[RMDB]
RNA sequence: GGGAACGACUCGAGUAGAGUCGAAAAUCAGAACAGUGGUUGCCUCGGGGGAGUUAAAUGCUUAAGACUCUAAGGACCUUGACGCAAUAGUCGCGCGCUGCCUUGGACGCUUCGCCAUUUCGCACACCUAGGGCAUCUUCUUCGGAAGAUGCCCUAGAAAAGAAACAACAACAACAAC
Reactivity to 2A3 in 0.01 (KOAc 150mM, MgCl2 10mM, bicine 150mM(pH8.5), 24C), signal-to-noise 2, nucleotides 027 to 126: u120c070a060g040a060a020c030a030g000u080g160g050u040u050g100c000c000u040c010g000g000g030g030g000a090g030u090u060a080a110a110u130g000c020u070u070a080a000g140a120c030u050c040u080a000a030g090g000a060c020c000u020u140g000a020c040g020c050a000a130u150a210g130u210c040g000c000g000c000g000c050u020g000c000c000u000u000g010g000a020c140g090c060u000u000c040g030c020c000a020u080u050u070c080g010c000a080c020a100c040
Reactivity to DMS in 0.01 (KOAc 150mM, MgCl2 10mM, bicine 150mM(pH8.5), 24C), signal-to-noise 1, nucleotides 027 to 126: u000c000a140g000a060a130c160a110g000u010g010g030u010u010g010c080c000u000c130g000g000g000g000g000a030g000u080u000a060a040a020u050g010c040u010u030a060a150g010a070c120u000c000u010a040a050g110g000a090c060c060u000u000g000a160c060g000c140a100a140u050a070g000u020c100g010c040g000c060g000c100u040g000c020c140u050u060g030g010a010c070g000c000u000u000c030g000c060c060a190u000u000u000c010g000c110a100c080a180c120
This 177-nucleotide RNA was probed chemically with 2A3 and DMS. Values are in units of 0.01, from 0 to 300, in steps of 10. The 2A3 profile rests on 716 reads. Conditions: 150 mM KOAc, 10 mM MgCl2 and 150 mM bicine (pH 8.5), 24 C.